[RMDB]
RNA sequence: GGGAACGACUCGAGUAGAGUCGAAAAGGCUGGUGCCGGAGCCGAUACCGGAAUACGAGACCUAAUGUGCGGUCGAAUGCACUGAAGUACGAAAGUACGAAGAGGUCACACCGAGGACCGAGACUCGAUAUGCUCGAUAGAUGGAGCUUUACAUCAAAUUAUGCUAUCCGUUCGCGGAUAGCAUAAUAAAAGAAACAACAACAACAAC
Reactivity to 2A3 in 0.01 (KOAc 150mM, MgCl2 10mM, bicine 150mM(pH8.5), 24C), signal-to-noise 2, nucleotides 027 to 156: g040g000c010u020g000g050u040g050c000c000g000g010a000g100c140c130g030a060u130a070c010c010g020g040a070a050u230a110c090g040a050g020a060c000c020u020a110a100u160g010u000g000c000g020g030u070c060g020a080a090u130g020c000a010c030u080g040a090a000g000u000a010c020g010a100a040a000g000u010a010c020g010a010a000g130a010g020g000u000c030a000c010a020c040c020g090a060g070g040a080c060c000g030a030g030a080c010u040c030g020a030u040a080u200g010c000u030c020g040a050u090a120g030a010u010g040g000a000g010c000u070u080u110a120c070a060u130c050a100a120
Reactivity to DMS in 0.01 (KOAc 150mM, MgCl2 10mM, bicine 150mM(pH8.5), 24C), signal-to-noise 1, nucleotides 027 to 156: g000g030c030u010g000g000u000g000c000c000g000g020a150g030c090c060g040a160u010a070c010c020g010g010a070a070u000a080c050g000a160g000a080c040c040u030a100a090u000g030u000g000c000g020g030u000c070g010a080a140u030g000c010a020c000u010g020a110a190g020u010a040c030g000a130a140a210g050u000a020c000g000a110a130g000a130g000g030u010c000a040c070a160c060c040g000a140g040g000a060c030c030g030a200g000a140c020u000c000g000a110u000a060u010g000c030u020c020g000a140u030a120g010a090u000g030g000a070g020c110u000u000u000a080c090a120u000c040a060a090
This 207-nucleotide RNA was probed chemically with 2A3 and DMS.
The RNA was probed in 150 mM KOAc, 10 mM MgCl2 and 150 mM bicine (pH 8.5) at 24 C.
Reactivities are given for positions 27 through 156.